[RMDB]
RNA sequence: GGGAACGACUCGAGUAGAGUCGAAAAGAUAUGGAUCCCAUGAAGGCGCAUAGAAAUUCGGAAACGAACACUAUGAACUACGCUUAAGUGGGAUCCUAAGUCAAACCUACUCGUUCGCGAGUAGGAACCAUAACUGGUAGUUCGCUACCAGUUAUGGAAAAGAAACAACAACAACAAC
Reactivity to 2A3 in 0.01 (KOAc 150mM, MgCl2 10mM, bicine 150mM(pH8.5), 24C), signal-to-noise 5, nucleotides 027 to 126: g030a010u060a030u090g000g000a010u000c000c000c010a010u040g020a040a060g170g000c050g000c060a000u020a020g040a080a300a050u070u030c030g030g030a060a060a060c010g010a020a010c070a020c080u010a010u030g040a140a070c100u200a050c260g010c030u060u020a070a010g000u000g000g000g000a000u000c000c000u000a020a000g000u020c020a000a040a120c000c010u000a000c000u000c010g080u080u090c300g010c010g140a000g010u000a000g000g000a010a030
Reactivity to DMS in 0.01 (KOAc 150mM, MgCl2 10mM, bicine 150mM(pH8.5), 24C), signal-to-noise 4, nucleotides 027 to 126: g020a060u000a300u000g000g020a000u000c000c000c000a000u010g010a300a090g000g000c000g000c010a010u010a010g000a100a050a300u000u000c000g000g010a100a140a160c000g020a010a030c250a300c010u010a010u000g010a110a100c140u010a300c050g010c010u000u000a020a300g020u000g010g000g000a010u000c000c010u000a010a060g000u000c020a050a110a090c010c010u010a000c000u000c010g000u000u010c230g010c020g010a000g000u000a000g010g010a030a110